[RMDB]
RNA sequence: GGGAACGACUCGAGUAGAGUCGAAAAGUCACUAUCAUGGAAUCGCGCUGGGUGGCUGCCUGUCAGUCCGGCACUAGAACACAACAGGCUGGUUCCCGGAUGCGCUUUGCACGCCGUGCUGUUCGGGGACGAGAUCCAACGGUGAGCUAAGCAUGUACUUAAUUGCAUAGUUCGCUAUGCAAUUAAGAAAAGAAACAACAACAACAAC
Reactivity to DMS in 0.01 (KOAc 150mM, MgCl2 10mM, bicine 150mM(pH8.5), 24C), signal-to-noise 2, nucleotides 027 to 156: g000u000c020a050c040u000a100u010c040a160u020g000g000a060a120u000c070g020c040g090c010u000g000g020g040u010g050g000c020u010g010c050c040u000g010u010c060a220g010u010c010c020g040g000c100a080c090u010a110g020a070a130c070a110c010a090a070c020a080g010g010c030u000g000g000u000u010c010c000c000g000g010a040u000g020c050g020c020u010u020u000g060c050a120c010g000c030c030g030u010g000c020u000g010u010u000c000g010g010g010g000a040c020g010a180g010a210u010c040c010a070a040c050g020g010u000g010a120g010c040u000a060a070g030c030a040u000g010u000a180
Reactivity to 2A3 in 0.01 (KOAc 150mM, MgCl2 10mM, bicine 150mM(pH8.5), 24C), signal-to-noise 5, nucleotides 027 to 156: g050u050c020a020c110u090a100u220c050a130u190g100g080a130a070u170c070g010c000g000c070u020g000g030g020u030g030g000c000u010g020c010c000u000g010u040c020a030g030u010c020c010g020g010c020a030c080u130a060g080a180a030c090a010c010a130a000c000a010g010g000c000u010g020g000u000u000c000c000c000g000g010a020u030g030c050g010c120u020u020u060g010c030a020c010g020c010c010g000u010g000c030u040g020u020u020c010g000g000g000g010a010c030g000a000g010a050u130c090c040a020a000c000g010g000u010g000a040g000c010u060a050a030g060c040a070u120g040u090a050

Source information: Structure probing data (DMS and 2A3) for a 207-nucleotide construct. The RNA was probed in 150 mM KOAc, 10 mM MgCl2 and 150 mM bicine (pH 8.5) at 24 C. The DMS profile rests on 5,586 reads. For 2A3 the reverse transcriptase was SuperScript II with manganese. Values cover nucleotides 27 to 156.